[RMDB]
RNA sequence: GGGAACGACUCGAGUAGAGUCGAAAAACGUGUUGAGUGCUAUGACAGGUUUAAAGUUAAUGAGACAAAUUCUCAAUAUUUGUUUAGUACUAUUAAUGCUCUACCAGAAACUUCUGCCGAUAUUCUGACCGACGAGGGUUCGCCCUCGUCAAAAGAAACAACAACAACAAC
Reactivity to DMS in 0.01 (KOAc 150mM, MgCl2 10mM, bicine 150mM(pH8.5), 24C), signal-to-noise 4, nucleotides 027 to 129: a000c110g030u020g030u060u020g020a050g050u010g020c030u050a080u030g050a000c110a030g030g040u020u030u000a030a040a050g020u080u000a050a070u050g020a070g020a020c140a050a030a140u040u030c100u040c060a000a000u040a060u010u030u000g010u000u000u000a110g040u000a040c060u010a080u070u010a040a130u020g020c060u020c010u060a080c040c080a120g000a100a120a050c120u030u030c050u000g050c000c000g030a050u050a070u000u000c020u030g020a090c230c110
Reactivity to 2A3 in 0.01 (KOAc 150mM, MgCl2 10mM, bicine 150mM(pH8.5), 24C), signal-to-noise 4, nucleotides 027 to 129: a000c010g000u100g020u040u090g020a000g010u000g000c000u050a040u210g040a020c010a020g100g050u050u070u090a150a130a020g040u050u110a190a120u210g030a010g000a000c050a070a100a060u260u000c110u010c000a060a050u050a000u130u010u030g030u010u030u000a010g000u000a000c030u010a070u110u060a020a040u120g010c010u000c000u010a070c020c020a010g070a040a110a030c050u080u030c030u030g000c020c030g010a000u040a130u130u040c050u050g030a030c000c030